[RMDB]
Structure probing data (DMS and 2A3) for a 177-nucleotide construct. The RNA was probed in 150 mM KOAc, 10 mM MgCl2 and 150 mM bicine (pH 8.5) at 24 C.
RNA sequence: GGGAACGACUCGAGUAGAGUCGAAAAGAUAUGGAGGCUGCCGUAGAGACCACGUAACAUCCACUCGGAAACGAGUGGUGGUGGUGUAGGCAGCUCCUAAGUCAAAAGCAUGCCUUCGGGCAUGCAACAAUAGUUCAGUCUUCGGACUGAACUAUUGAAAAGAAACAACAACAACAAC
Reactivity to DMS in 0.01 (KOAc 150mM, MgCl2 10mM, bicine 150mM(pH8.5), 24C), signal-to-noise 8, nucleotides 027 to 126: g010a040u010a300u000g000g010a030g010g020c000u000g010c000c000g010u010a180g010a100g000a030c000c000a010c000g010u010a020a040c190a020u010c000c000a000c000u000c010g000g010a110a090a170c010g010a010g010u000g000g010u000g000g010u000g000g000u000g010u000a060g010g010c000a010g010c000u000c000c000u000a040a160g010u000c030a080a090a130a130g010c000a010u000g000c000c000u000u010c230g030g010g010c000a000u000g000c010a040a060
Reactivity to 2A3 in 0.01 (KOAc 150mM, MgCl2 10mM, bicine 150mM(pH8.5), 24C), signal-to-noise 4, nucleotides 027 to 126: g010a020u100a060u160g030g010a040g300g150c010u010g020c010c030g080u270a070g040a020g050a210c000c010a010c020g020u020a030a010c020a300u060c010c000a000c000u000c000g020g000a070a080a040c020g000a000g000u000g000g000u000g000g000u000g000g000u020g020u020a040g000g020c000a000g000c000u010c000c000u000a040a020g020u000c040a020a000a060a120g000c000a000u000g010c010c000u030u060c230g050g000g000c000a000u000g000c000a000a000